[RMDB]
RNA sequence: GGGAACGACUCGAGUAGAGUCGAAAAUCGUGAGAUGUGGUGCCUCACGCGCUCGAGGCGUCCGUGGUCAGAGAGACCACUGACGCAAAAACUCGAGCGCAAAUAAACAGCAUUACAUCCAGAAUAAACGUCCUAGUCCAUUCGUGGACUAGGACGUAAAAGAAACAACAACAACAAC
Reactivity to 2A3 in 0.01 (KOAc 150mM, MgCl2 10mM, bicine 150mM(pH8.5), 24C), signal-to-noise 1, nucleotides 027 to 126: u170c100g020u040g080a240g000a020u020g000u030g020g000u000g000c020c020u070c020a070c120g000c000g000c000u000c000g000a000g000g000c000g000u000c000c010g000u000g000g000u000c040a030g130a010g050a000g000a300c000c000a000c000u000g000a010c000g000c000a160a110a070a000a000c000u000c000g000a010g000c000g000c000a000a000a000u050a000a060a030c070a020g000c000a000u000u010a000c000a000u000c000c000a000g040a020a080u250a000a160
Reactivity to DMS in 0.01 (KOAc 150mM, MgCl2 10mM, bicine 150mM(pH8.5), 24C), signal-to-noise 2, nucleotides 027 to 126: u000c050g000u000g000a050g010a000u000g000u000g000g000u000g000c000c120u030c300a150c180g000c000g040c000u000c000g000a030g060g020c000g030u050c000c050g000u000g000g010u050c000a140g020a220g000a130g000a000c020c000a000c000u000g000a000c000g050c030a040a090a090a150a300c000u000c060g000a020g010c000g000c000a000a030a120u010a000a050a090c300a250g000c000a050u000u000a010c000a000u000c000c010a170g010a050a080u050a000a080
Chemical mapping of a 177-nucleotide RNA with 2A3 and DMS. DMS adducts were read by reverse transcription with MarathonRT. 2A3 adducts were read by reverse transcription with SuperScript II with manganese. The reactions ran in a buffer of 150 mM KOAc, 10 mM MgCl2 and 150 mM bicine (pH 8.5), at 24 C. Source: RMDB library OK1LIB, as collected in RNAgym. Values are in units of 0.01, from 0 to 300, in steps of 10. For 2A3, 1,302 sequencing reads were counted.